Overview
Conditions: 150 mM KOAc, 10 mM MgCl2 and 150 mM bicine (pH 8.5), 24 C. Structure probing data (DMS and 2A3) for a 177-nucleotide construct. For 2A3, 1,259 sequencing reads were counted.
RNA sequence: GGGAACGACUCGAGUAGAGUCGAAAAUCCUACAGCUAAUACGUAGCCAAUCCUUUAGGGGAUGUAGCAUAUUAGUUUGAACAAUCGGCACAUUUUUGAUGUGUGAAUUAUGAGAAAUUUUAUGCACCUAUAAUAGCUGCUUCGGCAGCUAUUAUAGAAAAGAAACAACAACAACAAC
Reactivity to DMS in 0.01 (KOAc 150mM, MgCl2 10mM, bicine 150mM(pH8.5), 24C), signal-to-noise 2, nucleotides 027 to 126: u000c010c010u020a130c130a080g000c010u000a030a090u020a080c140g020u000a110g020c040c160a140a080u000c000c000u000u000u000a090g020g010g000g020a030u000g010u000a170g040c000a070u010a000u000u000a010g010u000u000u010g010a150a050c160a030a080u000c080g020g000c010a010c010a020u000u000u020u010u000g000a030u000g000u000g020u000g000a060a010u000u000a060u000g010a250g000a040a060a050u000u010u000u000a030u020g020c070a120c210
Reactivity to 2A3 in 0.01 (KOAc 150mM, MgCl2 10mM, bicine 150mM(pH8.5), 24C), signal-to-noise 2, nucleotides 027 to 126: u020c000c000u000a050c020a020g000c000u000a040a010u090a110c080g080u070a050g070c020c020a040a060u010c010c000u080u080u150a140g080g040g000g010a020u000g070u090a010g000c010a000u010a020u000u000a020g040u010u010u220g030a040a000c010a050a070u090c060g190g030c000a000c000a000u070u050u150u240u300g130a050u040g000u000g050u030g050a050a080u060u060a080u150g060a090g100a080a110a050u120u110u110u070a040u140g020c000a000c030